[RMDB]
RNA sequence: GGGAACGACUCGAGUAGAGUCGAAAAAUCACCAGCCCAGAGAUCUAGGAGGAAAAAAUGGCUUCCAUGGCUGGACCCAGGGGCCCCCUCCUGUGUGCUGCAUCAGGACCUGAUGCCCUGUGUCCCAGUUGCACCAGCUAUGGCUAUAAGGGGUCAAACUCCAUAACUUGUUCGCAAGUUAUGGAGUAAAAGAAACAACAACAACAAC
Reactivity to DMS in 0.01 (KOAc 150mM, MgCl2 10mM, bicine 150mM(pH8.5), 24C), signal-to-noise 1, nucleotides 027 to 156: a050u010c030a110c050c000a120g010c010c000c020a140g010a170g010a060u010c030u000a110g040g020a080g000g030a020a030a090a090a080a180u000g000g020c050u010u000c000c000a130u010g000g010c020u030g010g000a060c050c000c040a230g010g000g030g060c000c010c080c050c010u000c030c010u000g000u000g030u000g000c070u030g070c030a210u020c040a040g030g010a040c030c050u020g020a100u000g010c010c030c040u020g000u000g030u010c070c050c000a190g020u000u000g030c030a160c020c030a000g030c020u010a060u010g020g000c070u000a070u010a090a070g030g030g040g000u000c050a060a130
Reactivity to 2A3 in 0.01 (KOAc 150mM, MgCl2 10mM, bicine 150mM(pH8.5), 24C), signal-to-noise 1, nucleotides 027 to 156: a000u090c050a030c090c020a010g030c030c000c010a030g020a000g010a140u100c050u300a090g000g040a020g060g000a050a040a020a040a120a120u120g000g000c010u060u030c060c030a060u030g000g000c020u050g050g030a030c020c020c000a010g010g010g000g000c000c020c000c010c000u010c000c040u010g040u010g000u020g040c050u000g000c010a070u020c040a050g000g070a020c010c060u070g030a080u110g070c050c000c020u150g030u000g020u040c040c000c000a010g000u040u040g020c010a020c030c000a000g000c020u030a030u140g000g000c020u040a050u080a230a100g060g010g040g030u040c000a000a000